[RMDB]
RNA sequence: GGGAACGACUCGAGUAGAGUCGAAAACCGGAGCAAAGCCUCGGCGCCUCGGGAUCGGCGAUCUUCCUAUCAGGUCGUUGGCGGGGUAAUGGCCCACCAAGCCGAAGACGGGUAGCGGGUGUGAGAGCCUAGCUACAAUGUUCGCAUUGUAGCUAGGAAAAGAAACAACAACAACAAC
Reactivity to 2A3 in 0.01 (KOAc 150mM, MgCl2 10mM, bicine 150mM(pH8.5), 24C), signal-to-noise 1, nucleotides 027 to 126: c010c000g110g060a110g010c090a110a080a000g030c010c000u060c060g140g030c050g000c030c010u070c040g060g010g040a040u040c000g030g030c050g130a090u010c010u090u030c030c010u090a130u250c100a020g050g000u020c050g050u030u080g040g010c030g000g000g010g000u040a100a110u160g100g040c000c000c000a000c020c030a000a000g000c010c000g000a010a000g040a010c080g000g040g030u000a040g070c030g000g020g000u120g000u130g040a190g020a000g000
Reactivity to DMS in 0.01 (KOAc 150mM, MgCl2 10mM, bicine 150mM(pH8.5), 24C), signal-to-noise 1, nucleotides 027 to 126: c020c000g040g000a060g010c100a090a110a200g000c030c030u000c020g030g000c030g000c040c000u000c030g010g010g000a120u000c040g010g000c030g010a070u000c050u000u010c050c050u040a100u010c120a070g010g000u010c090g010u010u000g030g020c010g010g000g010g010u000a070a120u000g000g010c040c010c100a000c020c020a110a240g000c010c010g000a050a080g000a070c090g000g000g010u000a020g030c050g000g000g000u010g020u010g000a150g020a200g000